[RMDB]
RNA sequence: GGGAACGACUCGAGUAGAGUCGAAAAAUAAAGAUACAGGCAAGUUGACCGCCUGAAUCGUAGGCAAAAAGACUAAAAGGAUCAGGUAAGCAACAAUGAGUCCUUAAAAUCGACCGAAAUAAAAAAAGUCUAAUCAUAUGUUCGCAUAUGAUUAGACAAAAGAAACAACAACAACAAC
Reactivity to DMS in 0.01 (KOAc 150mM, MgCl2 10mM, bicine 150mM(pH8.5), 24C), signal-to-noise 2, nucleotides 027 to 126: a070u010a050a100a080g000a030u000a080c140a050g010g010c010a090a210g000u000u000g000a100c090c210g030c000c000u010g000a070a030u000c030g000u000a080g020g000c060a050a020a050a080a110g000a060c070u000a030a070a120a060g010g000a060u000c030a030g010g030u010a060a110g000c120a070a050c060a040a030u010g000a090g000u000c000c000u000u020a030a040a180a110u000c070g000a070c020c000g030a030a060a090u090a030a050a150a030a050a050a080
Reactivity to 2A3 in 0.01 (KOAc 150mM, MgCl2 10mM, bicine 150mM(pH8.5), 24C), signal-to-noise 1, nucleotides 027 to 126: a000u100a030a090a050g030a020u010a060c070a010g000g040c040a010a160g000u100u040g150a210c010c080g030c000c010u000g000a020a020u000c010g020u030a030g020g000c070a010a130a000a100a040g070a010c010u110a040a060a070a070g070g000a000u000c000a010g090g070u070a100a030g080c030a010a040c000a020a160u050g000a060g100u050c010c000u050u030a080a070a000a060u000c010g020a020c000c010g060a100a120a060u210a060a100a030a000a000a010a010
This 177-nucleotide RNA was probed chemically with DMS and 2A3. The data come from the RNA Mapping Database (RMDB), library M2PK90. High DMS reactivity at an A or C suggests that its Watson-Crick edge is free. The RNA was probed in 150 mM KOAc, 10 mM MgCl2 and 150 mM bicine (pH 8.5) at 24 C.